[RMDB]
RNA sequence: GGGAACGACUCGAGUAGAGUCGAAAAGUGAUGAGCUGACUCUGACCAGUAGCUUGUCAUCCACUGACUUCUGGUAUAGGACAGCACAUGUGCGGCAUACUUAUCUCUGUGCAUGGUGACAUCAGAGGGCUUCUUGAAUCUUCGGAUUCAAGAAGCCAAAAGAAACAACAACAACAAC
Reactivity to 2A3 in 0.01 (KOAc 150mM, MgCl2 10mM, bicine 150mM(pH8.5), 24C), signal-to-noise 1, nucleotides 027 to 126: g080u040g000a030u000g000a010g020c000u010g030a050c030u040c030u110g050a050c010c020a020g000u010a000g050c000u040u110g020u080c050a030u030c010c020a070c030u060g080a050c010u050u000c010u040g000g020u060a130u080a130g030g020a030c010a020g020c030a020c010a030u030g030u040g000c010g030g000c050a070u040a180c100u230u180a040u100c130u000c000u030g030u010g000c020a030u010g110g020u060g070a060c030a010u090c030a030g040a080g060
Reactivity to DMS in 0.01 (KOAc 150mM, MgCl2 10mM, bicine 150mM(pH8.5), 24C), signal-to-noise 1, nucleotides 027 to 126: g020u000g000a010u010g000a130g010c000u050g000a120c060u000c050u010g000a120c130c190a040g030u000a000g010c060u000u000g010u000c080a140u020c090c120a160c060u000g040a100c030u000u000c010u000g010g000u000a000u000a050g010g020a230c020a050g000c050a070c010a010u000g000u000g030c000g000g010c250a120u000a100c180u000u000a130u040c010u000c040u000g000u000g040c070a000u000g000g010u010g010a090c020a020u010c030a050g000a040g010